RNA sequence: GGGAACGACUCGAGUAGAGUCGAAAAAACAUCAAGCUUAUAUUGGACAUCAAAAAUAUAGCGUCAAAUAGUCUUAAAGACUGUCAUUCAACUUAUUGCAGAACCGUACAUGCACCUAUACAACCUCAUGAUCCAUUAGAUGAUGCGAUAAUGACACAUUUACCGUACUCUUCGGAGUACGGUAAAUAAAAGAAACAACAACAACAAC
Reactivity to 2A3 in 0.01 (KOAc 150mM, MgCl2 10mM, bicine 150mM(pH8.5), 24C), signal-to-noise 5, nucleotides 027 to 156: a000a000c070a060u090c060a120a020g040c050u240u050a030u060a030u110u090g010g040a070c060a120u160c080a050a080a050a140a000u060a030u040a070g020c040g030u030c020a050a060a070u070a080g030u000c020u070u240a140a120a030g020a010c020u030g010u070c020a060u130u080c010a040a100c080u120u150a060u060u220g030c010a010g020a110a060c030c040g030u050a060c010a060u050g020c030a020c000c010u060a050u010a100c030a040a070c020c010u050c020a030u040g040a080u050c030c010a030u030u130a050g030a130u140g020a010u040g070c040g040a020u100a110a060u210g050a020c050a000c000
Reactivity to DMS in 0.01 (KOAc 150mM, MgCl2 10mM, bicine 150mM(pH8.5), 24C), signal-to-noise 2, nucleotides 027 to 156: a070a060c040a060u000c010a120a120g030c030u000u010a060u000a060u000u000g020g030a160c020a100u000c060a050a080a100a080a050u000a080u000a050g000c040g020u000c030a110a080a070u000a010g020u010c000u000u020a090a040a150g000a060c010u000g030u000c060a160u000u000c090a030a090c040u000u000a030u000u000g060c010a070g020a040a070c060c040g010u000a030c110a050u000g010c000a050c020c000u010a080u010a040c050a050a060c040c000u000c060a040u000g010a080u000c020c020a060u000u020a120g060a150u000g010a040u000g010c000g020a130u000a050a040u000g020a140c140a140c140
Structure probing data (2A3 and DMS) for a 207-nucleotide construct. The 2A3 profile rests on 2,923 reads. High 2A3 reactivity points to a flexible backbone, as in loops and unpaired stretches. The DMS profile rests on 3,224 reads. The RNA was probed in 150 mM KOAc, 10 mM MgCl2 and 150 mM bicine (pH 8.5) at 24 C.